This 177-nucleotide RNA was probed chemically with DMS. The reactions ran in a buffer of 150 mM KOAc, 10 mM MgCl2 and 150 mM bicine (pH 8.5), at 24 C. It was measured as part of the RMDB library OK2TRN.

RNA sequence: GGGAACGACUCGAGUAGAGUCGAAAAGGUCAGGCUUGCUCAAUUUGAACUGGUCAUUCUUUCAGUAAGCUUUAGUUUGAGCACCAAGAAGUAAGUUUUGUAGGGAACUGGAUGAAUGUAAAGACUACAAAUUAAGUGGCUUCGGCCACUUAAUUUGAAAAGAAACAACAACAACAAC
Reactivity to DMS in 0.01 (KOAc 150mM, MgCl2 10mM, bicine 150mM(pH8.5), 24C), signal-to-noise 2, nucleotides 027 to 126: g010g010u000c020a090g010g000c030u000u020g000c050u000c050a060a080u020u000u000g000a080a050c030u000g020g020u000c100a200u000u010c030u000u000u000c060a040g000u010a100a020g010c010u000u000u000a080g030u040u000u010g010a060g000c020a190c080c020a040a140g010a050a080g010u000a080a060g010u010u000u000u000g010u000a150g000g000g000a100a060c020u000g000g000a050u000g000a030a050u020g010u000a120a060a130g000a080c040u000a140